[RMDB]
RNA sequence: GGGAACGACUCGAGUAGAGUCGAAAAGGAGAAAUGGCAGAGUGGUCGAAUGCGGCAGUCUUGAAAACUGUUGACUGUAACAGGUCCGGGGGUUCGAAUCCCUCUUUCUCCGCUGGGAAUGCAUAAAUGAGCAGAUACUCUUCGGAGUAUCUGCUCAAAAAGAAACAACAACAACAAC
Reactivity to DMS in 0.01 (KOAc 150mM, MgCl2 10mM, bicine 150mM(pH8.5), 24C), signal-to-noise 1, nucleotides 027 to 126: g000g000a060g000a040a030a000u000g010g060c050a000g010a080g000u020g000g000u000c020g030a090a190u000g030c020g000g000c000a030g000u000c030u000u010g000a080a080a160a020c000u030g010u000u020g010a030c010u010g000u000a160a070c190a190g020g000u000c030c030g000g000g040g000g000u000u010c010g000a300a090u010c000c000c010u000c080u030u000u020c020u000c000c000g000c100u000g010g000g020a100a030u000g010c090a100u000a030a060a160